This 207-nucleotide RNA was probed chemically with DMS and 2A3. Reactivities are rounded to 0.1 and cut off at 0 and 3. The reactions ran in a buffer of 150 mM KOAc, 10 mM MgCl2 and 150 mM bicine (pH 8.5), at 24 C.
RNA sequence: GGGAACGACUCGAGUAGAGUCGAAAACGAGGGGUGGGCGAAAGUUGCCAUGAGACCGUAACUUUCGUAGUCUUUGAUAAAGGGGCAGGUCUCGCUCUUUUGUCAUUGCGGUUGCCUAGAGGCAUGGAAAACCAUGACAGGUUCGCCUGUCAUGGAAGUUAUUUCGGAGGUUCGCCUCCGAAAUAACAAAAGAAACAACAACAACAAC
Reactivity to DMS in 0.01 (KOAc 150mM, MgCl2 10mM, bicine 150mM(pH8.5), 24C), signal-to-noise 1, nucleotides 027 to 156: c050g030a100g000g000g030g000u010g000g020g000c000g000a040a000a100g020u000u000g000c010c020a290u000g010a220g040a120c120c170g010u010a030a020c020u000u010u000c000g040u010a110g010u000c000u010u000u000g000a020u010a020a010a070g000g000g000g000c050a060g020g020u000c100u010c060g020c020u020c020u000u000u000u000g020u000c010a100u030u010g030c000g000g030u000u000g010c000c020u000a120g010a220g000g030c020a080u000g040g010a100a090a120a100c010c010a020u010g000a030c010a030g020g000u040u010c300g020c010c000u010g010u000c010a010u000g010g020a000a020
Reactivity to 2A3 in 0.01 (KOAc 150mM, MgCl2 10mM, bicine 150mM(pH8.5), 24C), signal-to-noise 3, nucleotides 027 to 156: c070g010a100g020g020g040g030u240g020g020g000c030g010a020a010a010g010u000u000g010c010c030a110u180g110a070g030a130c040c030g000u010a000a020c000u010u010u020c020g000u030a000g030u020c050u030u040u040g020a020u040a020a020a020g010g010g000g020c030a020g060g150u040c050u060c110g010c000u000c000u020u030u010u040g020u000c010a020u000u030g000c060g050g010u040u040g030c000c010u070a100g040a150g060g000c030a020u080g070g010a050a040a000a000c010c000a000u000g000a000c000a000g020g040u080u080c160g100c030c000u000g000u000c000a000u000g000g000a000a000